RNA sequence: GGGAACGACUCGAGUAGAGUCGAAAACGGGAUAGCGAAGUAAAUUUCGUCGGGAGGAACAUGGAGAUCAACACUAAUUAUAUGAAACUGUUCGAUGUUGAUUUGUCUACGCGAAUAGUGGCCAAAAACCCGCACUAUAUUUCGAUAUAGUGCGGGUAAAAGAAACAACAACAACAAC
Reactivity to 2A3 in 0.01 (KOAc 150mM, MgCl2 10mM, bicine 150mM(pH8.5), 24C), signal-to-noise 1, nucleotides 027 to 126: c050g090g060g000a020u080a060g050c020g020a020a000g000u070a070a090a190u070u150u100c070g010u010c050g030g020g030a090g030g040a010a000c040a050u100g050g050a100g010a040u100c010a000a020c010a030c040u010a050a130u300u030a130u070a130u230g130a120a000a020c010u040g050u020u030c070g000a160u040g000u080u000g010a070u060u000u060g080u000c000u000a030c070g000c000g000a000a000u040a030g010u000g000g060c030c030a020a070a140a030
Reactivity to DMS in 0.01 (KOAc 150mM, MgCl2 10mM, bicine 150mM(pH8.5), 24C), signal-to-noise 2, nucleotides 027 to 126: c100g000g010g000a120u000a100g010c030g000a030a040g020u000a070a110a110u000u000u000c040g010u000c080g000g010g010a110g020g010a040a080c070a070u000g010g020a090g000a070u000c050a020a040c060a070c110u000a080a100u000u020a050u010a120u000g010a120a080a050c080u000g010u010u000c070g010a050u020g040u000u000g000a060u000u000u010g000u000c020u070a040c090g020c020g000a070a060u000a080g000u000g000g020c060c100a020a080a030a130

Source: RMDB library OK2TST, as collected in RNAgym. An RNA of 177 nucleotides, treated with 2A3 and DMS and read out base by base. Values are in units of 0.01, from 0 to 300, in steps of 10. DMS adducts were read by reverse transcription with MarathonRT.